[RMDB]
RNA sequence: GGGAACGACUCGAGUAGAGUCGAAAACUUGGCUCGUGAGAGCCAAGAAGUGAGGUCUACGGACCUCACAGGCUCGCGUUCGCGCGAGCCACCUGGUCGGUGACGACCAGGAACAUUAACGGUGACGUUAAUGAAGAAUUACUUCGGUAAUUCAACAAGAACGUGAGUUCUUGACAUAACACGUGAGUGUUAUGACACCAACGCUUCGGCGUUGGUGAGGCGAUGGUGUUCGCCAUAAACGCUCUUCGGAGCUAAUGACACCUACUAGCUAUAGGUUCGCCUAUAGCAAAAGAAACAACAACAACAAC
Reactivity to 2A3 in 0.01 (KOAc 150mM, MgCl2 10mM, bicine 150mM(pH8.5), 24C), signal-to-noise 9, nucleotides 027 to 266: c000u000u000g000g000c000u000c010g070u120g120a170g000a000g040c000c000a000a000g000a020a000g000u000g000a000g000g000u000c010u030a070c300g100g000a000c000c000u000c000a000c000a000g000g000c000u000c000g010c010g030u050u050c200g020c000g000c000g110a000g000c000c000a000c000c000u000g000g000u000c000g010g070u080g040a050c010g000a000c000c000a000g000g000a000a020c000a000u000u000a000a000c000g020g040u040g050a010c000g000u000u000a000a000u020g030a040a070g000a000a000u010u010a000c010u020u050c140g100g000u000a000a000u000u010c010a030a060c010a030a000g000a010a000c020g110u140g150a100g020u030u000c000u000u010g030a020c000a010u010a000a000c000a000c010g070u080g110a070g010u000g030u000u000a000u010g040a010c000a000c000c000a000a000c000g010c000u050u100c240g150g000c000g000u000u000g000g000u000g000a010g000g000c000g000a010u040g000g010u000g000u010u010c000g000c010c000a020u210a020a060a020c050g010c010u000c010u040u070c230g120g000a010g000c000u000a010a010u020g010a000c000a000c000c000u000a010c000u010a010
Reactivity to DMS in 0.01 (KOAc 150mM, MgCl2 10mM, bicine 150mM(pH8.5), 24C), signal-to-noise 5, nucleotides 027 to 266: c000u010u000g000g000c000u000c010g000u020g010a220g000a010g000c010c000a000a010g010a100a130g010u000g000a010g000g000u000c000u000a090c190g020g000a000c000c000u010c000a000c000a080g020g020c010u000c010g020c000g030u000u020c210g020c010g040c010g010a010g010c000c020a010c000c010u000g000g010u000c000g000g000u020g000a150c010g010a010c000c000a010g000g010a230a210c010a000u000u010a000a010c000g000g000u010g000a090c000g010u020u010a000a000u000g000a230a160g000a020a000u000u000a000c010u000u020c130g010g000u000a000a000u000u000c000a240a300c020a000a010g000a000a000c000g000u020g000a220g000u000u010c000u000u000g010a260c010a010u000a000a000c000a000c000g000u010g000a120g010u000g000u000u000a000u000g010a300c020a000c000c010a000a010c010g010c000u000u030c160g010g010c000g020u000u000g000g010u000g010a050g000g010c000g010a020u000g000g000u000g000u000u000c020g000c000c020a130u010a010a030a090c240g000c000u000c000u000u030c180g010g000a010g000c000u000a010a140u000g000a000c000a010c000c000u000a030c050u010a180
The data come from the RNA Mapping Database (RMDB), library POS240. The record gives the reactivity of an RNA of 307 nucleotides to 2A3 and DMS. DMS (dimethyl sulfate) methylates the pairing face of unpaired adenines and cytosines. For 2A3 the reverse transcriptase was SuperScript II with manganese. Conditions: 150 mM KOAc, 10 mM MgCl2 and 150 mM bicine (pH 8.5), 24 C. 2A3 is a SHAPE reagent: it acylates the 2'-hydroxyl of flexible nucleotides of all four kinds. DMS adducts were read by reverse transcription with MarathonRT.